[RMDB]
RNA sequence: GGGAACGACUCGAGUAGAGUCGAAAAGUGAAAGCUGCUUGAUCUGAUGUCAGAGCCAGAUCAAGCUGAGAUGAGACCGUGGCUCGACCAGAGCGAUCACUAUAGACUUGCUUUCUGGCAUGGGUUCGGUGGAGUAGGUAUUCGUACCUACUCCACCAAAAGAAACAACAACAACAAC
Reactivity to 2A3 in 0.01 (KOAc 150mM, MgCl2 10mM, bicine 150mM(pH8.5), 24C), signal-to-noise 3, nucleotides 027 to 126: g100u080g080a130a050a020g040c050u060g000c000u020u000g000a000u000c000u010g010a020u070g110u140c070a060g030a070g150c000c000a000g010a000u000c000a000a000g000c000u010g010a070g000a040u100g020a010g030a020c030c040g100u080g000g030c000u020c030g100a140c060c040a030g020a010g020c020g010a030u030c010a020c070u170a090u070a290g060a070c060u010u080g010c010u080u220u000c030u030g020g000c060a080u190g070g000g000u120u130c090
Reactivity to DMS in 0.01 (KOAc 150mM, MgCl2 10mM, bicine 150mM(pH8.5), 24C), signal-to-noise 3, nucleotides 027 to 126: g010u000g020a070a090a190g030c050u010g020c020u000u000g010a010u000c000u000g000a060u000g020u000c300a160g010a190g000c070c000a020g010a010u000c000a000a010g000c000u000g000a080g000a080u010g000a140g010a100c040c040g030u010g000g010c010u010c020g000a130c040c040a070g020a020g000c000g000a030u000c030a110c170u010a130u010a080g000a010c080u000u000g000c010u000u000u000c020u000g000g000c050a100u000g010g000g000u000u000c080